[RMDB]
RNA sequence: GGGAACGACUCGAGUAGAGUCGAAAACACGCAGUUAUGGUAUCGAUUACGUGCAUAACAACUGCCAUUGACUGAUAUUCAGUUACGUUGGUAAUCGUGCACGAGUAUUCAUAUCAAUGGCAGCGUGGCAGACCUGUCAAUUCGUUGACAGGUCUGCAAAAGAAACAACAACAACAAC
Reactivity to DMS in 0.01 (KOAc 150mM, MgCl2 10mM, bicine 150mM(pH8.5), 24C), signal-to-noise 1, nucleotides 027 to 126: c020a090c000g000c130a070g040u000u000a030u000g010g020u000a000u010c100g030a090u000u000a060c020g010u020g000c020a060u030a060a140c150a060a180c300u000g000c010c000a000u000u010g000a010c210u030g010a060u010a100u000u020c000a120g000u010u000a000c300g090u000u000g060g040u000a030a100u000c100g010u010g020c000a090c170g000a060g020u000a010u000u000c050a040u000a050u020c040a010a060u000g000g000c010a000g000c020g010u000g010
Reactivity to 2A3 in 0.01 (KOAc 150mM, MgCl2 10mM, bicine 150mM(pH8.5), 24C), signal-to-noise 2, nucleotides 027 to 126: c000a000c010g000c010a020g000u020u040a030u060g060g070u070a050u110c090g010a040u130u050a060c050g030u030g010c000a010u020a020a090c050a020a080c080u090g010c000c040a010u040u060g000a010c010u020g010a050u020a090u200u070c020a010g000u050u050a020c080g020u060u110g160g140u080a070a060u110c020g020u010g000c050a000c040g000a000g000u030a090u040u110c010a000u030a010u060c000a060a070u010g010g020c010a010g000c010g000u030g070